[RMDB]
RNA sequence: GGGAACGACUCGAGUAGAGUCGAAAAACGCGGUCAUCCUGCCGGCGGCCAAGAGUCCCAACAGAGUCUCCGAUUCGGCAGCCACUACGGCACCUAAUGCCGUUCUCUACACAAGCGGGAACAUGUCGGAACAGGGAAAAUUCGUUUUCCCUGUUCCAAAAGAAACAACAACAACAAC
Reactivity to 2A3 in 0.01 (KOAc 150mM, MgCl2 10mM, bicine 150mM(pH8.5), 24C), signal-to-noise 2, nucleotides 027 to 126: a000c010g000c010g020g030u040c010a060u020c030c000u000g030c010c060g050g030c000g000g010c040c010a060a020g060a020g070u050c000c030c000a040a060c010a040g080a080g010u020c020u000c040c020g070a090u130u100c000g010g000c010a000g000c000c000a090c050u190a030c020g000g020c020a050c010c090u110a160a080u150g000c000c020g010u030u030c020u010c020u090a070c090a020c000a060a050g050c080g040g000g020a030a040c020a050u140g110u130c130
Reactivity to DMS in 0.01 (KOAc 150mM, MgCl2 10mM, bicine 150mM(pH8.5), 24C), signal-to-noise 3, nucleotides 027 to 126: a120c100g010c120g000g000u000c030a080u000c060c040u000g030c040c010g010g040c090g000g040c050c060a130a130g000a100g030u000c000c000c030a120a130c190a070g000a100g010u000c050u030c010c010g010a150u000u000c080g000g020c030a040g040c110c030a080c100u010a050c050g010g000c000a070c100c130u000a070a190u030g010c020c020g000u000u000c010u000c040u000a070c110a100c200a050a050g010c030g010g000g000a080a070c060a090u010g000u010c130
This 177-nucleotide RNA was probed chemically with 2A3 and DMS. The RNA was probed in 150 mM KOAc, 10 mM MgCl2 and 150 mM bicine (pH 8.5) at 24 C. Values are in units of 0.01, from 0 to 300, in steps of 10. The DMS profile rests on 1,589 reads. It was measured as part of the RMDB library OK2TRN.